This 177-nucleotide RNA was probed chemically with 2A3. For 2A3 the reverse transcriptase was SuperScript II with manganese. It was measured as part of the RMDB library M2PK50. Values cover nucleotides 27 to 126.
[RMDB]
RNA sequence: GGGAACGACUCGAGUAGAGUCGAAAACCAAGGUAGUUCGCUACCUUGGAAAGAAAGCUCGAGCGAAGGGAAGGGAAAGGACGCUCGAGCAACCGACCCAAAAAAGAGCAUGCUUCGGCAUGCUCAAUCAGGUCUUAACGUUCGCGUUAAGACCUGAAAAAGAAACAACAACAACAAC
Reactivity to 2A3 in 0.01 (KOAc 150mM, MgCl2 10mM, bicine 150mM(pH8.5), 24C), signal-to-noise 1, nucleotides 027 to 126: c000c000a020a000g000g000u000a000g000u030u110c210g000c090u000a000c000c020u000u030g010g020a010a030a020g030a040a070a000g000c010u010c010g010a010g000c010g040a130a130g180g100g060a070a160g080g000g010a140a140a060g090g040a030c000g010c000u010c000g020a000g000c000a000a000c000c010g040a010c010c000c000a040a130a040a030a000a020g000a000g000c000a000u010g000c000u020u040c190g020g010c000a000u010g000c000u030c000a000a020